[RMDB]
RNA sequence: GGGAACGACUCGAGUAGAGUCGAAAAGCUGAUUCGAAGUGAGUCACGUCAAAUCCAAGGUACUGGAUAGAACCGAUAGAGACGUUAAACGCGGUGUGUGUCCUAACGCAGGACAACACCAUACGUCGUUUGAACAAACUUUCGAGUUUGUUCAAACAAAAGAAACAACAACAACAAC
Reactivity to DMS in 0.01 (KOAc 150mM, MgCl2 10mM, bicine 150mM(pH8.5), 24C), signal-to-noise 6, nucleotides 027 to 126: g000c170u000g010a020u030u000c010g020a180a160g030u060g010a030g010u000c010a040c060g010u020c100a070a060a060u010c010c010a060a090g010g030u050a080c130u000g010g000a060u030a050g000a120a120c030c030g000a080u050a120g010a160g010a030c010g000u000u010a030a080a110c210g020c150g010g000u000g000u010g020u010g000u000c000c000u010a130a150c280g010c270a060g010g000a010c010a020a000c000a000c010c000a050u000a010c030g010u000c010
Reactivity to 2A3 in 0.01 (KOAc 150mM, MgCl2 10mM, bicine 150mM(pH8.5), 24C), signal-to-noise 8, nucleotides 027 to 126: g050c080u020g010a020u020u020c020g080a170a090g180u190g200a010g000u010c010a000c060g070u050c050a080a050a040u000c010c010a040a050g130g030u100a080c070u060g000g030a020u030a090g080a040a040c020c010g010a030u070a120g170a010g010a020c020g010u040u160a060a180a010c170g030c080g070g000u000g000u040g020u020g000u000c010c010u060a210a080c200g080c270a040g000g000a000c000a000a000c000a000c010c000a000u060a020c010g010u030c040